[RMDB]
RNA sequence: GGGAACGACUCGAGUAGAGUCGAAAACAUAGGCAGAGAAACCUCUGGAGUCCUCUAGACCGCAAGGAGGAAAUUACCAGCAGGGGGUGAUCCACCCGGAGAUGAGCGGACAAGCCACAUCCAGAGGGAGCAGCCCAGUUCGCUGGGCUGAAAAGAAACAACAACAACAAC
Reactivity to 2A3 in 0.01 (KOAc 150mM, MgCl2 10mM, bicine 150mM(pH8.5), 24C), signal-to-noise 5, nucleotides 027 to 129: c030a020u140a030g110g000c070a010g030a010g060a150a060a040c010c010u000c020u000g000g010a030g020u020c030c010u040c020u030a080g060a180c050c020g090c090a050a050g010g000a010g000g030a050a030a000u060u060a060c020c020a010g040c010a040g070g030g000g010g010u050g040a050u040c010c020a060c020c000c000g020g000a090g010a060u140g040a040g020c040g000g000a040c050a030a060g060c040c030a050c000a090u020c010c000a000g010a040g030g020g000a010g000
Reactivity to DMS in 0.01 (KOAc 150mM, MgCl2 10mM, bicine 150mM(pH8.5), 24C), signal-to-noise 7, nucleotides 027 to 129: c090a050u050a130g010g040c090a070g000a010g000a120a080a130c070c020u020c030u030g040g000a090g040u030c010c030u040c030u060a090g030a130c100c080g030c120a090a110g050g040a080g030g000a000a090a100u040u020a080c030c040a080g010c140a000g000g020g000g020g010u010g030a070u030c000c000a100c040c090c010g030g010a130g040a070u040g000a110g040c070g010g030a090c090a090a120g020c050c070a000c080a230u000c000c030a090g000a070g030g000g040a060g020
This 170-nucleotide RNA was probed chemically with 2A3 and DMS. Reactivities are given for positions 27 through 129. Conditions: 150 mM KOAc, 10 mM MgCl2 and 150 mM bicine (pH 8.5), 24 C.